[RMDB]
RNA sequence: GGGAACGACUCGAGUAGAGUCGAAAAUCGCCUGCAUGAAGCCGGAAUCGCUAGUAAUCGCAGGUCAGCUAUACUGCGGUGAAUGUGUUCCUGAGCCUUGUACACACCGCCCGUCAAGCCACGAAAGAAAUCAUGUCCGUUUCGACGGACAUGAUUUAAAAGAAACAACAACAACAAC
Reactivity to 2A3 in 0.01 (KOAc 150mM, MgCl2 10mM, bicine 150mM(pH8.5), 24C), signal-to-noise 3, nucleotides 027 to 126: u040c040g030c050c000u020g060c010a040u080g140a110a020g040c020c010g010g090a030a040u190c020g000c020u010a010g010u010a020a010u030c030g000c000a010g000g060u050c050a010g020c000u090a090u100a270c010u000g000c000g000g030u020g000a030a020u020g010u000g020u010u000c000c000u030g000a010g000c000c010u040u090g070u090a000c020a000c010a020c040c020g000c000c010c000g000u010c030a010a000g010c020c010a070c080g110a080a030a100g120
Reactivity to DMS in 0.01 (KOAc 150mM, MgCl2 10mM, bicine 150mM(pH8.5), 24C), signal-to-noise 3, nucleotides 027 to 126: u020c070g040c020c010u010g030c030a070u030g020a120a080g020c080c050g010g000a040a040u010c060g010c030u020a070g000u010a080a000u000c040g040c010a000g000g000u000c160a110g000c130u020a020u010a040c040u000g000c010g010g000u000g000a110a110u000g000u030g030u000u010c000c030u010g010a160g000c020c010u000u000g000u010a040c070a050c120a050c050c000g000c030c030c010g010u000c030a090a130g000c010c010a060c080g000a040a090a150g000